[RMDB]
RNA sequence: GGGAACGACUCGAGUAGAGUCGAAAAAAUGGCUAUCGCAAGAGUCAUUCUGGUCUGUGGCCGAAUAUUAGGAAAGAUUCAAUACACUCUGAUCAUAUAAAUACUCUAUAUCUAGAUGCAGCUGAGAGUACUAUGCGUUUUUCGAAACGCAUAGUACAAAAGAAACAACAACAACAAC
Reactivity to DMS in 0.01 (KOAc 150mM, MgCl2 10mM, bicine 150mM(pH8.5), 24C), signal-to-noise 3, nucleotides 027 to 126: a030a010u000g000g010c010u000a030u000c170g050c200a110a120g010a040g000u000c050a060u000u000c030u010g010g010u010c010u000g030u000g000g010c080c060g010a070a050u000a060u000u010a150g020g010a090a090a080g000a070u000u000c030a050a080u000a120c130a070c040u000c070u010g000a040u010c060a050u010a060u010a090a020a070u000a040c070u000c010u010a070u010a070u010c060u020a080g000a070u000g010c080a050g020c060u000g000a110g010a250
Reactivity to 2A3 in 0.01 (KOAc 150mM, MgCl2 10mM, bicine 150mM(pH8.5), 24C), signal-to-noise 3, nucleotides 027 to 126: a000a030u100g020g010c010u030a030u130c050g030c120a080a020g000a010g050u040c020a000u050u010c030u040g020g000u010c030u010g100u050g030g000c050c030g040a080a020u110a070u150u160a090g060g110a120a100a040g070a030u120u060c030a030a040u090a150c030a010c030u040c050u060g020a030u030c020a000u120a000u040a220a150a020u120a040c020u020c020u040a040u020a070u220c030u040a050g010a080u070g050c040a020g030c060u050g040a040g010a010
The record gives the reactivity of an RNA of 177 nucleotides to DMS and 2A3. The reactions ran in a buffer of 150 mM KOAc, 10 mM MgCl2 and 150 mM bicine (pH 8.5), at 24 C.